The record gives the reactivity of an RNA of 177 nucleotides to DMS and 2A3.
The data come from the RNA Mapping Database (RMDB), library OK2TST.
The 2A3 profile rests on 771 reads.
Conditions: 150 mM KOAc, 10 mM MgCl2 and 150 mM bicine (pH 8.5), 24 C.
Values cover nucleotides 27 to 126.
The DMS profile rests on 771 reads.
[RMDB]
RNA sequence: GGGAACGACUCGAGUAGAGUCGAAAAACGCGAUGACAACCGAAAUGGACAUCGAAAUGAAAAUGAUGGGCGAACAAAUCCAAACCCAAAUCGGUAGCAUGAAAGAAAGUACGGAUGCGAUGGAUCAUGCUGAGUCAUCAUUCGUGAUGACUCAGCAAAAAGAAACAACAACAACAAC
Reactivity to DMS in 0.01 (KOAc 150mM, MgCl2 10mM, bicine 150mM(pH8.5), 24C), signal-to-noise 2, nucleotides 027 to 126: a060c130g010c030g050a050u000g020a140c110a120a070c020c020g000a020a040a300u000g000g020a120c010a020u010c040g010a030a140a130u030g000a140a040a090a090u000g000a110u010g000g000g020c010g020a020a080c100a040a170a030u000c000c080a090a140a170c030c010c000a030a130a140u000c040g000g020u000a050g000c000a070u000g050a130a070a140g010a040a040a090g010u000a030c150g010g000a040u000g000c060g010a080u020g030g000a130u000c050a110
Reactivity to 2A3 in 0.01 (KOAc 150mM, MgCl2 10mM, bicine 150mM(pH8.5), 24C), signal-to-noise 1, nucleotides 027 to 126: a010c020g000c000g020a050u000g040a060c030a020a050c010c030g050a120a070a070u230g030g020a030c000a020u000c010g040a110a000a090u110g050a020a090a060a070u030g110a090u040g030g000g070c050g050a210a020c040a050a120a000u020c030c000a040a030a120c010c000c020a070a060a000u060c050g030g030u000a030g010c010a000u040g160a060a050a060g120a000a100a000g040u010a000c040g080g030a060u120g030c030g020a020u020g010g040a050u020c020a000